[RMDB]
Chemical mapping of a 177-nucleotide RNA with 2A3 and DMS. In probing experiments dimethyl sulfate is read out at A N1 and C N3, which are open when not base-paired. DMS adducts were read by reverse transcription with MarathonRT. The reactions ran in a buffer of 150 mM KOAc, 10 mM MgCl2 and 150 mM bicine (pH 8.5), at 24 C. Source: RMDB library TTRDEL, as collected in RNAgym.
RNA sequence: GGGAACGACUCGAGUAGAGUCGAAAAGAUAUGGAUUGAUCUAAGAUAUCGACGAUCUCGGAAACGAGGGAGAUACUUAGAGUCAAUCCUAAGUCAAAACGACGGCACACUUCGGUGUGCCGUCGAACCCUUUACUGUACUUCGGUACAGUAAAGGGAAAAGAAACAACAACAACAAC
Reactivity to 2A3 in 0.01 (KOAc 150mM, MgCl2 10mM, bicine 150mM(pH8.5), 24C), signal-to-noise 1, nucleotides 027 to 126: g070a030u030a030u280g000g020a020u010u060g050a000u000c000u000a010a060g210a300u040a030u010c080g130a260c020g020a240u030c000u000c020g000g000a080a080a070c010g010a020g030g030g010a020g000a000u000a020c000u010u000a030g040a000g110u090c010a020a000u020c000c000u000a130a040g030u030c060a000a000a040a110c000g010a000c000g100g240c140a000c000a000c020u120u290c300g100g000u000g070u080g070c040c000g000u000c000g030a000a000
Reactivity to DMS in 0.01 (KOAc 150mM, MgCl2 10mM, bicine 150mM(pH8.5), 24C), signal-to-noise 1, nucleotides 027 to 126: g000a070u000a300u000g000g000a020u000u000g000a110u010c010u000a020a000g010a150u000a000u000c010g000a080c280g020a010u010c000u010c000g010g000a140a080a190c010g000a010g020g010g000a050g000a010u000a010c000u000u000a000g000a050g030u000c010a010a010u020c010c000u000a030a140g010u010c000a040a050a150a160c040g000a010c020g000g000c010a020c040a010c000u000u040c140g040g020u000g000u000g000c000c000g010u020c000g000a010a070